[RMDB]
Chemical mapping of a 177-nucleotide RNA with 2A3. The 2A3 profile rests on 542 reads. The RNA was probed in 150 mM KOAc, 10 mM MgCl2 and 150 mM bicine (pH 8.5) at 24 C.
RNA sequence: GGGAACGACUCGAGUAGAGUCGAAAAGCUGGUCCGGCUUGGCCCCAGCGAACACUUGACGAACGGUUAGUCCCGUCUUGUGGAUUAGGACGUUCUAGGUCCGGCCUGGCCCCUAGUUCGUCCGAAAGGCCGGUACCAUGUUCGCAUGGUACCGGCCAAAAGAAACAACAACAACAAC
Reactivity to 2A3 in 0.01 (KOAc 150mM, MgCl2 10mM, bicine 150mM(pH8.5), 24C), signal-to-noise 1, nucleotides 027 to 126: g000c010u000g070g000u160c080c070g030g010c200u050u090g150g000c000c000c000c000a040g000c020g010a010a010c030a000c030u030u010g020a040c000g000a140a000c040g160g000u200u030a010g100u210c020c020c020g020u010c000u070u020g010u010g000g030a050u030u130a140g000g000a000c000g000u020u000c000u000a000g000g000u060c050c070g000g180c000c100u110g150g000c050c050c000c000u000a000g030u000u000c000g000u030c000c000g000a030a060a030